[RMDB]
RNA sequence: GGGAACGACUCGAGUAGAGUCGAAAAGAUAUGGAAACCUGGGAGAUCCAUUCGGAAACGAAUGAAGAUUAGUCCCUGGUUUCCUAAGUCAAACGCUUUGUGUUUUGCUUCGGCAAAACACAAAGCGCCUACCUAAAUCGUUCGCGAUUUAGGUAGGAAAAGAAACAACAACAACAAC
Reactivity to 2A3 in 0.01 (KOAc 150mM, MgCl2 10mM, bicine 150mM(pH8.5), 24C), signal-to-noise 2, nucleotides 027 to 126: g010a000u050a030u150g000g020a000a030a020c020c010u040g050g010g000a100g010a020u000c030c020a010u010u000c010g030g060a110a030a010c030g000a010a010u050g050a220a220g020a040u060u060a140g300u020c020c000c000u000g000g000u000u000u000c000c000u000a030a000g020u020c030a250a000a140c030g000c000u000u030u000g000u000g000u010u000u040u030g000c000u020u220c300g090g000c020a000a010a020a020c040a000c060a040a010a000g010c000g050
Reactivity to DMS in 0.01 (KOAc 150mM, MgCl2 10mM, bicine 150mM(pH8.5), 24C), signal-to-noise 2, nucleotides 027 to 126: g010a040u000a280u010g010g000a020a000a010c020c010u000g000g020g010a060g000a010u000c010c000a020u000u010c000g020g020a050a050a120c000g010a010a000u000g010a170a150g020a030u000u000a130g000u000c010c010c000u000g000g000u000u000u000c000c000u000a000a090g010u010c010a100a100a300c020g030c000u000u020u020g010u000g010u020u010u000u000g010c010u010u020c300g050g000c000a000a010a000a010c000a000c010a000a000a000g000c000g020
Structure probing data (2A3 and DMS) for a 177-nucleotide construct. For DMS the reverse transcriptase was MarathonRT. Source: RMDB library TTRDES, as collected in RNAgym. The reactions ran in a buffer of 150 mM KOAc, 10 mM MgCl2 and 150 mM bicine (pH 8.5), at 24 C. The DMS profile rests on 2,176 reads. Values cover nucleotides 27 to 126.